[RMDB]
RNA sequence: GGGAACGACUCGAGUAGAGUCGAAAAGCGGCUAGUUUAGGAGGGAAGAAAACCCUUGGGCAAACGCCCAAAGCCUGCGUAUAUUCCGGCCGGAGCAUCCUGGCGCCCAGUUUGGGGAGGAGGGGUGUGCUGGUUACUGUUUCGACAGUAACCAGCAAAAAGAAACAACAACAACAAC
Reactivity to DMS in 0.01 (KOAc 150mM, MgCl2 10mM, bicine 150mM(pH8.5), 24C), signal-to-noise 2, nucleotides 027 to 126: g010c020g000g000c010u000a040g000u020u010u060a030g000g000a000g000g000g010a070a150g000a230a170a080a090c000c000c000u010u000g010g000g010c000a060a110a220c140g000c000c000c000a040a030a100g000c020c010u030g050c060g030u000a100u000a090u020u000c020c030g030g000c010c020g000g030a190g080c010a090u000c010c060u000g000g000c300g000c060c010c050a080g030u000u030u030g000g000g010g000a100g000g040a240g000g000g000g010u030g020
Reactivity to 2A3 in 0.01 (KOAc 150mM, MgCl2 10mM, bicine 150mM(pH8.5), 24C), signal-to-noise 1, nucleotides 027 to 126: g060c010g020g000c010u100a080g090u070u120u090a040g040g000a030g030g000g000a040a040g140a030a210a140a160c020c010c000u020u050g000g010g000c110a160a210a040c190g020c000c000c030a000a000a000g000c000c020u000g000c000g020u160a060u030a020u200u000c000c000g060g000c060c000g020g000a040g000c000a000u030c050c010u000g090g040c000g040c030c000c000a020g000u010u150u220g000g000g000g000a030g010g060a030g000g000g020g000u070g010